The record gives the reactivity of an RNA of 177 nucleotides to 2A3. For 2A3, 407 sequencing reads were counted.

[RMDB]
RNA sequence: GGGAACGACUCGAGUAGAGUCGAAAAACAGCACGUAUCUACGGAUACGUGCUGAAGAGUGUUAUGAUGUUGGAGGCGACUCCGAGUCUAGCUCUGCUUUCCCUGCUAAAGAUGGCUUUAGCAGGAAGCGAGGACGGACCUUCGGGUCCGUCCUCGCAAAAGAAACAACAACAACAAC
Reactivity to 2A3 in 0.01 (KOAc 150mM, MgCl2 10mM, bicine 150mM(pH8.5), 24C), signal-to-noise 1, nucleotides 027 to 126: a000c000a000g000c000a000c010g000u000a000u000c000u020a010c300g030g000a000u000a000c000g000u000g030c000u000g000a000a000g000a000g000u010g030u150u170a060u240g050a000u030g100u300u150g000g080a080g060g000c040g060a060c010u000c000c020g000a000g000u000c000u000a000g020c020u000c000u090g000c000u040u020u020c020c000c020u000g040c000u060a090a020a060g000a290u300g150g220c000u000u000u000a000g050c000a000g000g130a020a050
The reactions ran in a buffer of 150 mM KOAc, 10 mM MgCl2 and 150 mM bicine (pH 8.5), at 24 C.